[RMDB]
RNA sequence: GGGAACGACUCGAGUAGAGUCGAAAAGAGCUCUAGAUGCGAUUGUAGACUGUUACAGCAUCUGCUAUCAGUCUGAGAUACCUCAGGAUAGCUGGAGGUAUCUGCAACGGUGCAGACUCCAGUGACACCGUGAACAAUCGUUCAUGUCACAGAGCAGCAUUAAUCGUGGCUUCGGCCACGAUUAAUGAAAAGAAACAACAACAACAAC
Reactivity to 2A3 in 0.01 (KOAc 150mM, MgCl2 10mM, bicine 150mM(pH8.5), 24C), signal-to-noise 4, nucleotides 027 to 156: g020a010g000c000u000c000u040a030g010a070u080g020c000g000a000u000u010g000u010a010g000a010c000u010g020u110u170a090c060a040g030c020a190u130c200u280g000c010u040a040u080c000a010g000u000c010u020g000a000g000a060u060a040c020c000u000c000a020g130g040a300u150a200g140c060u080g090g020a020g000g000u020a020u000c000u000g000c010a030a040c050g100g030u020g010c000a020g060a200c020u030c060c020a030g030u010g110a040c000a000c020c020g000u030g030a050a010c010a000a020u000c000g050u080u100c030a070u130g090u070c040a030c030a180g000a010g000c030a000g000
Reactivity to DMS in 0.01 (KOAc 150mM, MgCl2 10mM, bicine 150mM(pH8.5), 24C), signal-to-noise 2, nucleotides 027 to 156: g020a170g020c000u000c020u030a070g020a130u000g020c040g010a010u000u000g040u010a020g010a050c000u010g030u000u010a070c040a060g050c070a260u020c070u030g000c020u000a010u000c000a080g010u000c010u020g000a120g010a040u000a060c030c000u010c020a090g000g020a240u000a140g000c000u010g000g010a050g030g000u000a030u010c010u000g010c030a140a080c080g000g000u000g000c000a040g010a110c030u000c040c020a180g030u000g000a170c070a020c060c010g000u000g020a090a050c020a060a070u000c020g010u020u020c040a040u000g000u010c040a150c050a040g010a040g030c010a130g000
An RNA of 207 nucleotides, treated with 2A3 and DMS and read out base by base. High 2A3 reactivity points to a flexible backbone, as in loops and unpaired stretches. It was measured as part of the RMDB library OK3TST. The 2A3 profile rests on 2,108 reads. The reactions ran in a buffer of 150 mM KOAc, 10 mM MgCl2 and 150 mM bicine (pH 8.5), at 24 C. 2A3 adducts were read by reverse transcription with SuperScript II with manganese. For DMS the reverse transcriptase was MarathonRT.